[RMDB]
RNA sequence: GGGAACGACUCGAGUAGAGUCGAAAAUAGUGUCAAGACUGCAUAGUAGGAGACAUUAAUCGUUAGGUGAACUGUCAUCUGGAGAUGAGAGUUACAAUGAUAUUCUCUGGGACCUUUGCUCCUGCAACACUUCUCAUGCUUUCGAGCAUGAGAAGUGAAAAGAAACAACAACAACAAC
Reactivity to DMS in 0.01 (KOAc 150mM, MgCl2 10mM, bicine 150mM(pH8.5), 24C), signal-to-noise 3, nucleotides 027 to 126: u010a040g020u010g020u000c040a090a120g000a070c070u010g000c120a080u010a040g020u000a110g030g030a280g000a040c140a060u000u000a050a020u000c030g000u000u000a130g020g020u000g000a010a010c040u000g000u000c020a020u000c010u010g030g010a180g010a010u000g000a000g020a030g030u010u010a030c020a060a030u000g000a040u000a110u000u000c000u000c010u020g000g020g000a060c090c130u000u000u010g010c060u000c030c020u010g010c110a070a150
Reactivity to 2A3 in 0.01 (KOAc 150mM, MgCl2 10mM, bicine 150mM(pH8.5), 24C), signal-to-noise 2, nucleotides 027 to 126: u080a010g030u020g020u060c030a050a070g110a120c050u070g030c120a120u150a180g080u020a020g070g010a010g010a050c090a040u080u110a080a020u010c040g060u020u040a110g020g080u120g110a000a010c030u110g130u180c000a000u010c030u110g180g130a300g010a040u040g000a010g000a000g000u000u000a020c030a040a050u050g010a000u000a040u040u080c060u000c050u040g170g020g030a060c000c050u070u050u120g000c020u020c030c020u000g050c030a050a050